[RMDB]
RNA sequence: GGGAACGACUCGAGUAGAGUCGAAAAGCUAUUUGGUGGGUGGUUGGUGCUGGCGCGCGCCUAUAAAAAAGGACGCACCGCCGCCCUAAUCGCCAGUGCGUUCCGGACGCCUUCGCCCCACACAGCCCUUAGAAGACUAUUUCGAUAGUCUUCUAAGAAAAGAAACAACAACAACAAC
Reactivity to 2A3 in 0.01 (KOAc 150mM, MgCl2 10mM, bicine 150mM(pH8.5), 24C), signal-to-noise 9, nucleotides 027 to 126: g050c040u060a130u150u180u180g130g020u100g020g030g000u040g010g040u060u280g020g010u040g010c060u110g050g000c020g000c010g000c030g020c040c020u100a100u230a070a130a020a010a000a010g030g010a050c010g000c000a030c030c030g010c010c000g000c000c000c000u010a010a010u020c010g010c020c010a040g020u050g080c020g030u070u020c010c000g010g030a030c020g010c000c000u020u040c030g040c000c010c000c000a020c000a000c020a030g050c000c010
Reactivity to DMS in 0.01 (KOAc 150mM, MgCl2 10mM, bicine 150mM(pH8.5), 24C), signal-to-noise 6, nucleotides 027 to 126: g010c040u020a050u020u010u010g010g020u020g000g000g030u010g010g010u000u020g050g010u010g010c000u030g020g020c010g010c150g000c040g010c000c000u000a090u030a000a050a080a090a090a040g010g010a070c040g010c010a030c170c020g000c020c000g000c010c020c010u000a010a020u020c060g010c040c040a070g010u010g010c030g010u000u020c010c030g010g000a080c090g000c040c020u000u000c060g000c010c000c010c020a050c130a070c110a090g000c070c060

Chemical mapping of a 177-nucleotide RNA with 2A3 and DMS. High DMS reactivity at an A or C suggests that its Watson-Crick edge is free. The DMS profile rests on 23,021 reads. The RNA was probed in 150 mM KOAc, 10 mM MgCl2 and 150 mM bicine (pH 8.5) at 24 C.